Chemical mapping of a 177-nucleotide RNA with 2A3 and DMS. Values cover nucleotides 27 to 126. Source: RMDB library M2PK50, as collected in RNAgym. DMS adducts were read by reverse transcription with MarathonRT. The reactions ran in a buffer of 150 mM KOAc, 10 mM MgCl2 and 150 mM bicine (pH 8.5), at 24 C.

RNA sequence: GGGAACGACUCGAGUAGAGUCGAAAAAAGGACUGGUUCGCCAGUCCUUAUUCAUUCGUACGCAACGAAGCGUAAGUCAUUACGCAAAUGACUUAAAGCGUAUACGAAAGGACUUCGGUCCUUUCAACACCCUCUUUUGUUUCGACAAAAGAGGGUGAAAAGAAACAACAACAACAAC
Reactivity to 2A3 in 0.01 (KOAc 150mM, MgCl2 10mM, bicine 150mM(pH8.5), 24C), signal-to-noise 2, nucleotides 027 to 126: a000a000g000g000a000c010u000g020g050u030u040c130g030c040c010a010g000u000c000c000u000u000a000u000u010c000a000u010u000c020g030u030a010c000g010c040a100a050c070g120a090a040g100c040g080u020a010a000g030u010c000a050u020u050a050c070g020c170a020a050a050u050g020a000c020u060u040a080a060a000g000c010g000u020a050u030a080c090g010a010a000a000g000g010a010c000u040u040c180g040g010u030c000c000u000u000u000c000a010a000
Reactivity to DMS in 0.01 (KOAc 150mM, MgCl2 10mM, bicine 150mM(pH8.5), 24C), signal-to-noise 4, nucleotides 027 to 126: a040a000g000g010a010c000u010g000g010u000u000c220g030c010c000a030g010u000c000c000u000u000a010u000u000c030a270u000u000c060g010u000a040c020g010c020a060a090c100g020a070a060g030c150g020u000a010a010g000u010c050a040u000u000a070c300g030c280a080a070a010u000g000a040c030u000u000a030a040a230g010c010g000u000a030u000a080c190g010a010a020a000g000g010a020c000u000u000c200g010g010u000c000c010u000u000u000c000a130a210

Values are in units of 0.01, from 0 to 300, in steps of 10.